[RMDB]
RNA sequence: GGGAACGACUCGAGUAGAGUCGAAAAACGGCCUGGUCUGUGCCAAGUGUUUGCUGACGCAACCCCCACUGGCUGGGGCUUGGCCAUAGGCCAUCAGCGCAUGCGUGGAACCUUUGUGGCUCCUCUGUAGAUUAGUUAGGUUCGCCUAACUAAUCUAAAAAGAAACAACAACAACAAC
Reactivity to DMS in 0.01 (KOAc 150mM, MgCl2 10mM, bicine 150mM(pH8.5), 24C), signal-to-noise 8, nucleotides 027 to 126: a120c120g000g010c020c050u000g010g010u000c010u000g020u010g000c000c010a020a030g000u010g020u020u000u000g010c010u010g040a190c300g000c010a020a020c070c000c000c010c000a040c050u020g000g020c160u000g000g000g000g000c020u000u000g000g000c060c040a030u010a020g010g000c010c010a030u010c160a070g000c070g010c080a060u010g000c050g010u000g000g000a030a060c020c010u000u020u030g010u010g010g010c050u000c010c010u010c060u010g020
Reactivity to 2A3 in 0.01 (KOAc 150mM, MgCl2 10mM, bicine 150mM(pH8.5), 24C), signal-to-noise 9, nucleotides 027 to 126: a000c040g070g000c000c010u020g010g000u010c010u020g030u050g000c000c000a010a010g040u050g080u190u060u050g030c050u130g120a090c180g000c020a010a030c000c000c020c020c000a030c080u160g250g010c100u020g010g010g000g000c000u010u010g000g000c040c010a010u030a000g000g000c010c000a030u060c020a010g040c030g010c040a060u160g030c040g030u050g020g020a050a060c000c000u070u120u220g140u140g050g000c020u020c010c000u020c040u060g070